[RMDB]
RNA sequence: GGGAACGACUCGAGUAGAGUCGAAAACGGUGUGGCCUGCCCCCCUGUAGAGGGGUGUCGUAGGCUACCCGUUGAAGCGAGGGAAACCGGGUCAGGCCGGAAACGGAACAGCCCAUCCUGCGCACGUCCGCCGUUGCAGAAUCACGCCGCGGAGCAUGAAUUAAAAGUGGUUCGCCACUUUUAAUUCAAAAGAAACAACAACAACAAC
Reactivity to 2A3 in 0.01 (KOAc 150mM, MgCl2 10mM, bicine 150mM(pH8.5), 24C), signal-to-noise 2, nucleotides 027 to 156: c010g000g000u080g000u000g110g020c000c000u000g000c010c010c000c010c000c000u090g100u200a220g060a030g200g020g000g010u050g050u080c040g000u020a000g010g000c000u000a000c010c000c000g020u010u000g010a060a020g000c000g000a040g000g040g020a150a200a090c140c150g020g050g000u090c050a080g030g030c000c010g000g020a020a020a010c000g000g000a010a040c020a040g020c020c010c000a000u010c000c000u050g080c030g000c000a030c070g050u000c010c000g000c010c000g040u040u040g000c060a020g090a250a120u200c020a050c170g020c020c030g040c010g030g010a000g070c050a050u060
The record gives the reactivity of an RNA of 207 nucleotides to 2A3. Source: RMDB library ARCHII, as collected in RNAgym. For 2A3 the reverse transcriptase was SuperScript II with manganese. Values cover nucleotides 27 to 156. The 2A3 profile rests on 898 reads.